The record gives the reactivity of an RNA of 177 nucleotides to DMS and 2A3. Conditions: 150 mM KOAc, 10 mM MgCl2 and 150 mM bicine (pH 8.5), 24 C. For 2A3 the reverse transcriptase was SuperScript II with manganese.
RNA sequence: GGGAACGACUCGAGUAGAGUCGAAAAGAUAUGGACCCAGCUUUUGACGCUCGACUUUCGGAAACGAAAGAUCGAGCGAUAAGCUGGUCCUAAGUCAAAGGGUCUCUAGCUUCGGCUAGAGACCCAAGCUUGAUUACUACUUCGGUAGUAAUCAAGCAAAAGAAACAACAACAACAAC
Reactivity to DMS in 0.01 (KOAc 150mM, MgCl2 10mM, bicine 150mM(pH8.5), 24C), signal-to-noise 2, nucleotides 027 to 126: g020a050u000a300u010g010g010a020c080c060c050a000g010c000u000u000u010u000g010a210c060g000c000u000c000g010a030c000u000u020u000c000g030g000a130a090a200c000g010a000a000a000g010a100u000c010g010a000g020c020g060a020u010a000a030g000c000u010g000g000u000c000c000u010a020a160g000u000c020a130a090a130g000g020g010u000c000u000c000u000a010g010c000u000u000c170g050g000c010u000a010g010a010g040a000c000c000c000a000a020
Reactivity to 2A3 in 0.01 (KOAc 150mM, MgCl2 10mM, bicine 150mM(pH8.5), 24C), signal-to-noise 2, nucleotides 027 to 126: g020a010u080a100u170g020g010a040c120c110c040a000g020c010u120u120u110u190g190a100c070g020c010u000c000g030a010c020u000u000u000c030g020g030a100a110a110c020g010a010a000a030g020a080u020c000g010a000g000c000g000a000u000a000a000g020c010u000g010g000u000c000c000u010a120a030g060u020c030a030a090a140g020g000g000u000c000u000c000u000a010g010c010u050u100c300g060g000c000u000a000g040a000g000a000c000c000c000a000a000